[RMDB]
RNA sequence: GGGAACGACUCGAGUAGAGUCGAAAACGUUCAUUCCCAGUUCGCGCAUCUGCUGUUCGCCGAUCACGCGGGUGAUAACCUUUUUGCUGUAGCUGUCGGCCAACUGGCGCGCCUGUGACGCCAGGUAGCCUUUGUAAUUAUUCGUAAUUACAAAGGCAAAAGAAACAACAACAACAAC
Reactivity to 2A3 in 0.01 (KOAc 150mM, MgCl2 10mM, bicine 150mM(pH8.5), 24C), signal-to-noise 9, nucleotides 027 to 126: c060g060u090u070c040a060u050u040c000c000c000a010g060u080u090c040g000c010g000c050a070u030c050u130g030c040u040g050u080u050c030g000c020c010g020a040u080c030a020c110g050c020g020g020g020u040g040a110u110a170a130c030c030u050u080u050u130u190g040c040u070g030u100a060g020c030u040g040u060c010g020g000c020c010a040a050c020u030g020g000c010g000c010g020c010c010u110g030u090g040a030c020g020c020c000a010g020g030u050a030
Reactivity to DMS in 0.01 (KOAc 150mM, MgCl2 10mM, bicine 150mM(pH8.5), 24C), signal-to-noise 9, nucleotides 027 to 126: c130g000u010u010c090a230u010u010c000c000c000a160g000u010u010c060g020c060g010c090a090u010c050u010g010c040u000g010u000u010c190g020c020c020g010a050u010c080a050c090g020c060g010g010g010u000g000a100u020a090a110c080c040u000u010u010u010u010g010c030u010g010u000a080g010c060u000g010u000c020g010g000c010c080a060a070c020u000g010g010c010g010c050g010c080c040u000g000u020g010a140c040g010c190c010a020g000g010u010a150
Annotation: An RNA of 177 nucleotides, treated with 2A3 and DMS and read out base by base. It was measured as part of the RMDB libraries RFM100 and RFMREP.